Conditions: 150 mM KOAc, 10 mM MgCl2 and 150 mM bicine (pH 8.5), 24 C.
This 177-nucleotide RNA was probed chemically with 2A3 and DMS.
It was measured as part of the RMDB libraries RFM100 and RFMREP.
2A3 adducts were read by reverse transcription with SuperScript II with manganese.
DMS adducts were read by reverse transcription with MarathonRT.

[RMDB]
RNA sequence: GGGAACGACUCGAGUAGAGUCGAAAACGGAAGCCGGCGAACCCGACAUCCCAGUGAAGAGUCUGGGGACCCCCGUUGGGAAGCGAAGACCCUGUGGAGCUUUACUGCAGCCUGCCGUUGCUCCACACUUACGGAAACUUUUCGAAGUUUCCGUAAGAAAAGAAACAACAACAACAAC
Reactivity to 2A3 in 0.01 (KOAc 150mM, MgCl2 10mM, bicine 150mM(pH8.5), 24C), signal-to-noise 8, nucleotides 027 to 126: c020g030g030a060a000g060c020c010g030g020c040g030a060a050c000c000c000g010a020c010a060u090c000c000c010a010g010u060g090a130a180g030a030g110u020c010u020g000g000g010g050a050c000c010c000c000c010g010u020u040g020g020g020a060a010g040c020g050a050a010g040a060c000c010c010u020g010u010g000g000a010g000c010u140u150u150a030c010u030g020c010a070g190c020c110u100g010c000c020g010u010u020g000c000u000c000c000a000c000a000
Reactivity to DMS in 0.01 (KOAc 150mM, MgCl2 10mM, bicine 150mM(pH8.5), 24C), signal-to-noise 5, nucleotides 027 to 126: c070g000g030a090a120g000c030c030g000g010c040g030a080a130c050c030c020g020a100c060a090u020c020c000c000a050g010u010g000a110a160g000a230g010u010c020u010g000g010g000g000a250c020c010c020c010c050g020u010u000g010g000g000a090a150g020c060g000a090a070g010a150c010c010c020u000g030u000g000g010a050g000c010u020u030u040a050c050u020g020c030a110g020c120c120u020g010c000c080g010u000u010g000c000u000c000c010a010c020a080